[RMDB]
The record gives the reactivity of an RNA of 177 nucleotides to DMS and 2A3. The reactions ran in a buffer of 150 mM KOAc, 10 mM MgCl2 and 150 mM bicine (pH 8.5), at 24 C. The DMS profile rests on 13,248 reads. The 2A3 profile rests on 19,262 reads.

RNA sequence: GGGAACGACUCGAGUAGAGUCGAAAAGAUAUGGACUGCCUCGCUAGCCUUUUAUCUCGGAAACGAGAUAUUAGGCUUGGACCGAGGGCAGUCCUAAGUCAAACCGAUCGCGUUCGCGCGAUCGGAACAUGGUACCAUAGUUCGCUAUGGUACCAUGAAAAGAAACAACAACAACAAC
Reactivity to DMS in 0.01 (KOAc 150mM, MgCl2 10mM, bicine 150mM(pH8.5), 24C), signal-to-noise 7, nucleotides 027 to 126: g010a040u000a300u010g000g000a010c000u000g010c000c000u000c010g010c020u000a010g010c000c000u000u000u010u000a000u000c000u000c000g000g000a090a080a190c000g010a010g010a010u000a000u000u000a010g020g010c000u000u000g010g010a080c300c030g010a050g020g010g010c000a000g010u000c000c000u000a010a080g010u000c020a090a130a240c010c000g000a010u000c000g010c000g010u000u010c240g030c010g010c000g000a000u000c010g000g000a020a070
Reactivity to 2A3 in 0.01 (KOAc 150mM, MgCl2 10mM, bicine 150mM(pH8.5), 24C), signal-to-noise 4, nucleotides 027 to 126: g020a020u070a060u140g000g010a000c000u000g000c010c010u010c010g020c030u020a010g000c000c000u000u030u010u010a010u010c000u000c000g030g030a090a090a070c010g020a010g000a000u000a010u010u000a000g010g050c010u000u020g010g020a040c050c070g020a120g050g050g000c000a000g000u000c000c000u000a030a000g020u000c030a040a040a100c000c010g000a000u000c000g000c000g040u090u070c280g010c000g000c000g190a000u000c000g000g010a000a010